[RMDB]
RNA sequence: GGGAACGACUCGAGUAGAGUCGAAAAGAUAUGGACGUUAACAGAUUCCACUGAGCUUUUGACGUUCGAUAUUCGGAAACGAAUAUACCGAACGAUAAGCUCGUGGAAUCUGUUAACGUCCUAAGUCGUUAAUAUACUCCUUCGGGAGUAUAUUAACAAAAGAAACAACAACAACAAC
Reactivity to DMS in 0.01 (KOAc 150mM, MgCl2 10mM, bicine 150mM(pH8.5), 24C), signal-to-noise 2, nucleotides 027 to 126: g010a100u010a300u010g000g010a000c010g010u010u000a010a010c000a000g000a010u000u000c000c000a020c020u010g030a010g030c000u000u000u010u010g020a230c080g030u000u000c020g010a070u000a000u000u010c000g000g010a160a100a250c000g000a020a010u000a020u000a090c280c020g020a010a000c000g010a100u000a020a010g000c000u000c000g030u000g000g000a010a010u000c000u010g000u010u000a000a000c000g010u000c000c000u000a010a080g010u010c110